This 177-nucleotide RNA was probed chemically with 2A3 and DMS. It was measured as part of the RMDB library M2PK90. Reactivities are given for positions 27 through 126. For 2A3, 1,949 sequencing reads were counted. The reactions ran in a buffer of 150 mM KOAc, 10 mM MgCl2 and 150 mM bicine (pH 8.5), at 24 C. DMS adducts were read by reverse transcription with MarathonRT.
RNA sequence: GGGAACGACUCGAGUAGAGUCGAAAAUAAAAGGAGGAGGAGAAAUAUAGCGCGUGAUCGGUCCUCCCACGCGCGUCUCGCGCUGAUAAGCGGAAUAAGAGGAUGAUUAAUAGAUAGCGCGCAAAAAUCUAGGCAAUAAGUUCGCUUAUUGCCUAGAAAAAGAAACAACAACAACAAC
Reactivity to 2A3 in 0.01 (KOAc 150mM, MgCl2 10mM, bicine 150mM(pH8.5), 24C), signal-to-noise 2, nucleotides 027 to 126: u080a000a090a000a010g030g020a010g000g010a000g020g030a060g080a040a130a010u230a020u090a080g010c030g000c010g010u010g010a040u050c040g010g070u010c000c000u010c000c010c010a040c010g040c000g030c010g050u000c050u070c070g000c000g010c000u020g040a070u060a200a030g060c050g020g040a040a060u130a120a010g030a010g020g010a010u040g000a040u100u250a130a110u030a110g050a050u030a030g030c010g000c000g000c030a130a000a000a000a000
Reactivity to DMS in 0.01 (KOAc 150mM, MgCl2 10mM, bicine 150mM(pH8.5), 24C), signal-to-noise 3, nucleotides 027 to 126: u010a050a040a090a090g010g000a020g020g010a060g000g000a090g000a090a070a110u010a110u010a170g010c010g020c010g010u000g000a070u010c030g000g000u000c020c020u000c010c040c010a060c170g000c020g010c030g000u000c070u000c020g020c000g010c010u000g010a090u020a080a100g020c050g010g020a090a040u010a120a160g000a050g000g000a040u000g000a160u000u000a090a080u000a110g000a040u010a130g000c000g010c010g010c050a030a080a030a070a070